[RMDB]
RNA sequence: GGGAACGACUCGAGUAGAGUCGAAAAGGCGCACGUUACGAGGCCUGGCUCCCGGUCCGGCCCUACCUUGCGUGCGCAUAUCUCCGGGAUCUGCGCCGCGUCUGCUCGCGGCGAUUUCGGUUAUGCCGGCCAUAUGCGAUUUCGAUCGCAUAUGGCCAAAAGAAACAACAACAACAAC
Reactivity to 2A3 in 0.01 (KOAc 150mM, MgCl2 10mM, bicine 150mM(pH8.5), 24C), signal-to-noise 3, nucleotides 027 to 126: g130g000c020g000c000a010c010g020u050u120a010c060g000a070g010g000c000c000u000g000g010c040u150c070c110c120g040g000u010c000c010g010g000c000c010c010u120a170c000c030u090u080g000c000g000u000g030c000g020c000a000u050a010u050c060u010c020c010g000g000g010a030u020c030u170g050c080g000c060c000g020c000g020u060c110u260g060c120u050c000g000c000g000g000c000g000a000u000u000u010c000g000g040u080u040a080u110g150c090c080